[RMDB]
RNA sequence: GGGAACGACUCGAGUAGAGUCGAAAAUGGCUUCUCCUGGGCGAUCGCUCGCUGUUUUUGUGGCUGGCUUUCAGCGGGCUGGAGGAGCCGGGAGAGGAGGCGGAGGACCGAGCCAAAAACGUCAGCCUAUAGAGGAAGCUGUUCGCAGCUUCCUCAAUAUUGAAUAUCCUUUCGAGGAUAUUCAAUAAAAAGAAACAACAACAACAAC
Reactivity to 2A3 in 0.01 (KOAc 150mM, MgCl2 10mM, bicine 150mM(pH8.5), 24C), signal-to-noise 2, nucleotides 027 to 156: u150g010g000c000u020u020c010u000c030c000u100g030g090g070c090g090a110u160c080g010c000u010c000g000c010u020g060u000u030u000u020u070g130u060g030g000c000u000g000g010c000u010u010u030c000a000g000c000g000g010g000c010u020g030g030a090g010g040a010g010c000c010g000g010g000a030g020a000g000g030a050g000g030c080g030g030a040g020g000a000c040c030g020a020g020c040c070a020a020a020a000a010c070g010u000c000a000g000c000c010u100a150u100a130g000a000g000g010a000a010g000c000u000g030u100u120c200g010c150a000g000c000u000u000c000c000u000c000a000a000
Reactivity to DMS in 0.01 (KOAc 150mM, MgCl2 10mM, bicine 150mM(pH8.5), 24C), signal-to-noise 1, nucleotides 027 to 156: u010g020g060c010u010u000c000u000c000c020u000g010g030g030c070g000a190u000c120g040c040u000c030g000c000u010g030u000u000u000u000u010g030u010g030g040c000u000g040g000c010u010u000u000c010a070g000c030g040g010g020c020u020g040g000a080g000g000a160g080c000c020g000g010g000a130g020a120g000g000a040g040g030c030g010g000a120g050g000a140c050c000g000a150g010c050c040a010a070a050a050a050c090g020u000c010a040g000c010c010u000a160u000a130g000a090g010g040a050a020g020c010u000g010u000u000c220g050c030a010g000c000u000u000c000c000u000c000a000a040